[RMDB]
RNA sequence: GGGAACGACUCGAGUAGAGUCGAAAAACCUCUAAGUUCGCUUAGAGGUAAUGAACGCUGCAAAAAGCAGCGCGCUCAGCGGUGCACGCAAAAGCAACGCAAGAACACCAUUCUUCGGAAUGGUGAACCAGUUAAAGGGAUUCGUCCCUUUAACUGGAAAAGAAACAACAACAACAAC
Reactivity to DMS in 0.01 (KOAc 150mM, MgCl2 10mM, bicine 150mM(pH8.5), 24C), signal-to-noise 3, nucleotides 027 to 126: a040c000c000u000c010u000a010a020g010u000u020c210g020c010u000u000a000g000a010g000g020u000a000a010u010g020a120a110c020g010c000u000g010c010a080a110a110a130a130g010c000a020g000c020g000c110g010c090u000c050a110g010c000g000g000u000g000c000a040c110g000c190a050a020a190a070g010c000a010a040c040g010c010a140a090g010a130a170c010a000c010c000a010u000u000c000u000u030c200g020g000a000a010u000g000g010u000g000a050a070
Reactivity to 2A3 in 0.01 (KOAc 150mM, MgCl2 10mM, bicine 150mM(pH8.5), 24C), signal-to-noise 3, nucleotides 027 to 126: a000c010c010u020c000u010a010a030g010u030u160c170g040c120u010u010a000g000a010g010g000u020a010a030u070g010a110a020c020g000c000u020g000c020a110a100a130a100a190g010c000a020g000c010g000c020g040c020u060c050a030g010c020g030g010u010g010c030a040c180g120c070a020a060a040a050g000c000a000a020c000g000c030a040a020g060a140a030c010a000c010c000a000u000u010c000u020u040c140g090g000a000a000u000g000g010u010g010a010a030